[RMDB]
RNA sequence: GGGAACGACUCGAGUAGAGUCGAAAAGGGGUCCAUGCUGAUGAUGGCAGUGGGAGAUCUGAAGCCUCCACGGAUCGAGGAUCACUGAACUACCAUCGGAUGCAUGGACGGAGGCACCCAAAACUCAGACACCUUAGUUCGCUAAGGUGUCUGAGAACAAAACAAGCAAGUUCGCUUGCUUGUUUUGAAAAGAAACAACAACAACAAC
Reactivity to 2A3 in 0.01 (KOAc 150mM, MgCl2 10mM, bicine 150mM(pH8.5), 24C), signal-to-noise 2, nucleotides 027 to 156: g000g010g010g020u000c000c000a000u000g060c000u000g000a140u050g000a000u000g040g060c000a000g000u000g010g000g000a020g000a000u000c010u020g030a060a010g010c010c000u010c000c010a030c050g010g000a010u010c000g010a230g010g000a000u000c020a000c000u010g020a090a040c090u120a130c260c000a000u010c000g020g000a010u040g000c000a000u000g000g000a000c010g000g010a000g010g010c010a020c010c010c010a040a070a030a060c010u010c000a000g010a000c000a010c000c010u040u010a020g090u120u120c220g040c170u010a000a010g020g000u000g000u000c000u010g000a000g000a010a000
Reactivity to DMS in 0.01 (KOAc 150mM, MgCl2 10mM, bicine 150mM(pH8.5), 24C), signal-to-noise 2, nucleotides 027 to 156: g030g000g020g030u000c000c000a020u000g000c030u000g040a300u000g000a040u000g020g000c010a010g040u000g000g000g000a080g000a020u010c010u000g010a070a120g000c020c000u000c030c070a300c090g040g000a020u000c010g000a190g010g000a070u000c020a050c030u000g020a110a070c090u010a170c000c000a050u010c000g010g010a240u000g010c020a030u000g000g000a010c010g000g020a070g040g010c020a060c000c000c020a060a050a080a220c020u000c000a020g000a010c000a010c030c000u000u000a030g010u000u000c300g040c000u010a000a010g000g000u000g000u010c000u000g000a010g020a070a180
Structure probing data (2A3 and DMS) for a 207-nucleotide construct.
The RNA was probed in 150 mM KOAc, 10 mM MgCl2 and 150 mM bicine (pH 8.5) at 24 C.
For DMS the reverse transcriptase was MarathonRT.
The data come from the RNA Mapping Database (RMDB), library RNAMAK.
For 2A3, 3,540 sequencing reads were counted.